This 177-nucleotide RNA was probed chemically with DMS.
[RMDB]
RNA sequence: GGGAACGACUCGAGUAGAGUCGAAAAGAUAUGGACUCUCAUGGCAUGAAUAGGACUUUUGACGAGCUACGGGUCGGAAACGACCCAUAGCUCGAUAAGUCCGUUCAUGCCAUGAGAGUCCUAAGUCCUUGGUUAAAAGGUUCGCCUUUUAACCAAGAAAAGAAACAACAACAACAAC
Reactivity to DMS in 0.01 (KOAc 150mM, MgCl2 10mM, bicine 150mM(pH8.5), 24C), signal-to-noise 1, nucleotides 027 to 126: g000a100u010a300u010g000g020a030c000u000c000u000c000a000u010g010g050c010a020u000g000a020a010u000a110g070g000a010c000u000u000u010u010g020a300c170g000a010g010c010u000a020c060g000g000g000u000c000g000g000a050a060a220c020g010a010c000c000c000a000u000a000g010c000u000c000g000a010u000a010a030g000u000c000c000g000u000u000c000a000u000g020c020c000a000u000g010a010g000a000g000u000c000c000u000a000a120g010u010c060

Reactivities are rounded to 0.1 and cut off at 0 and 3. It was measured as part of the RMDB library TTRINS.